[RMDB]
RNA sequence: GGGAACGACUCGAGUAGAGUCGAAAACACGGCUGGGCGACACGCUCAAAUUGCGGGAAACCCCUUAGAGCCUCUAGCUACCAAGCCGCCGGUCGAAAGACGGCGGUGGCCAGGUUAAUUCCCUCGGGUACGGUGAUAACGCUAGAGGAUUGGGCAACUGUUUGGAUAAGUUCGCUUAUCCAAACAGAAAAGAAACAACAACAACAAC
Reactivity to 2A3 in 0.01 (KOAc 150mM, MgCl2 10mM, bicine 150mM(pH8.5), 24C), signal-to-noise 1, nucleotides 027 to 156: c120a040c020g180g000c040u070g000g040g030c070g130a130c060a050c120g050c010u020c040a060a090a080u130u150g030c070g000g000g070a030a080a070c030c010c030c010u020u110a090g030a040g130c000c000u000c010u000a000g000c000u000a000c050c090a020a010g000c010c000g030c000c000g120g250u040c010g070a140a010a010g020a000c000g000g020c000g020g000u030g000g010c000c000a010g000g000u060u080a060a090u080u110c020c000c030u050c170g010g000g000u140a210c070g000g000u000g000a010u000a050a010c040g010c000u000a000g000a000g000g000a010u020u070g010g030g000c020a070a050
The record gives the reactivity of an RNA of 207 nucleotides to 2A3. For 2A3 the reverse transcriptase was SuperScript II with manganese. The data come from the RNA Mapping Database (RMDB), library ARCHII. The reactions ran in a buffer of 150 mM KOAc, 10 mM MgCl2 and 150 mM bicine (pH 8.5), at 24 C.